[RMDB]
RNA sequence: GGGAACGACUCGAGUAGAGUCGAAAAUCGGACGGCGGCCAUGAGUCGCAACGCAAAGCCGCCGCAAGUGGAGUUAGCGAGAAGAGACUAGGCUUUGGUUUCUUCAAGUGAAGCGGUCACCAAUCAGAAUAGCUUGCGCAGUUCGCUGCGCAAGCAACGAAUUGUGUUCUUUCGAGAACACAAUUCGAAAAGAAACAACAACAACAAC
Reactivity to 2A3 in 0.01 (KOAc 150mM, MgCl2 10mM, bicine 150mM(pH8.5), 24C), signal-to-noise 2, nucleotides 027 to 156: u080c030g030g040a040c000g000g010c010g000g020c030c020a090u150g030a040g120u170c040g030c150a090a020c050g030c040a070a050a000g000c000c000g000c070c000g010c010a040a010g040u040g030g070a050g000u180u070a010g060c000g010a000g000a070a010g010a000g000a000c000u020a040g140g160c060u220u100u150g000g000u000u020u000c000u000u000c010a000a020g010u030g010a060a030g010c000g080g010u040c000a030c080c030a010a090u080c000a020g100a120a100u130a070g000c000u000u020g000c000g000c010a000g000u060u110c150g080c120u010g010c000g000c000a000a000g010c000a000a000

Notes: Structure probing data (2A3) for a 207-nucleotide construct.